[RMDB]
RNA sequence: GGGAACGACUCGAGUAGAGUCGAAAAGCACACACGUGUGGGAGCAGCCAAGGGGUGCGCGGGGCCCCACGUGUCGUGUGCCCACAGCCCCAUCACCGCCCUGGCACUCCCGGGGGGGCAGGAGCCCAUGGUAUCUUGGGUUCGCCCAAGAUACCAUAAAAGAAACAACAACAACAAC
Reactivity to 2A3 in 0.01 (KOAc 150mM, MgCl2 10mM, bicine 150mM(pH8.5), 24C), signal-to-noise 1, nucleotides 027 to 126: g020c000a000c000a000c000a000c020g040u040g040u220g020g030g010a090g110c120a040g040c040c000a100a100g070g020g020g010u060g010c100g000c080g010g020g040g010c000c020c020c000a010c030g050u070g000u040c130g010u040g020u060g020c010c000c000a060c020a010g020c000c020c000c030a050u110c030a040c010c020g120c050c020c000u040g030g010c010a010c050u060c000c020c040g000g000g000g010g010g010g030c000a030g070g080a040g000c000c000c000
Reactivity to DMS in 0.01 (KOAc 150mM, MgCl2 10mM, bicine 150mM(pH8.5), 24C), signal-to-noise 3, nucleotides 027 to 126: g010c020a030c010a030c070a020c070g030u000g030u020g020g000g000a100g040c090a190g010c000c040a060a050g040g000g020g030u000g010c100g000c080g010g010g010g000c010c050c050c010a020c060g010u000g020u000c130g020u010g020u000g000c010c020c040a110c190a180g000c030c010c000c010a100u000c060a090c020c040g010c030c010c040u000g000g000c030a210c040u000c000c010c030g000g000g000g000g000g000g010c050a070g000g010a140g010c020c040c020